[RMDB]
RNA sequence: GGGAACGACUCGAGUAGAGUCGAAAACACGGGAGGCGCAGCUGCUGCAUGACGCUUUAACGUCGCAGCUCACCACCGCCUGACCAUUCUGCCAGGAGACAACGGUUGCCCACUCUUUAAUCAUUGUUGACGAAAGAUCUUUCGAGAUCUUUCGUCAAAAAGAAACAACAACAACAAC
Reactivity to DMS in 0.01 (KOAc 150mM, MgCl2 10mM, bicine 150mM(pH8.5), 24C), signal-to-noise 1, nucleotides 027 to 126: c190a090c050g000g000g070a050g050g030c100g020c170a170g020c060u050g000c020u000g010c040a130u040g030a050c040g000c180u080u030u010a220a160c050g010u000c040g000c000a000g060c000u000c160a090c090c080a040c160c000g010c000c000u000g020a040c070c000a200u020u000c050u010g020c040c040a040g010g010a220g000a040c070a070a060c040g000g000u000u000g000c030c010c020a110c100u000c090u020u000u000a070a100u010c150a100u050u020g020u000
Reactivity to 2A3 in 0.01 (KOAc 150mM, MgCl2 10mM, bicine 150mM(pH8.5), 24C), signal-to-noise 2, nucleotides 027 to 126: c110a000c050g000g000g000a040g000g050c010g040c000a010g020c020u040g020c000u020g020c020a120u230g000a010c010g000c000u210u050u090a170a050c000g010u000c000g000c010a010g000c000u060c040a030c020c000a010c000c000g000c000c000u050g000a100c010c000a020u080u010c050u050g010c000c000a000g010g000a060g070a000c020a030a010c050g060g000u090u080g010c020c000c000a070c060u100c020u000u150u170a100a060u230c090a160u070u170g070u080
The record gives the reactivity of an RNA of 177 nucleotides to DMS and 2A3. Conditions: 150 mM KOAc, 10 mM MgCl2 and 150 mM bicine (pH 8.5), 24 C. It was measured as part of the RMDB libraries RFM100 and RFMREP. The 2A3 profile rests on 816 reads.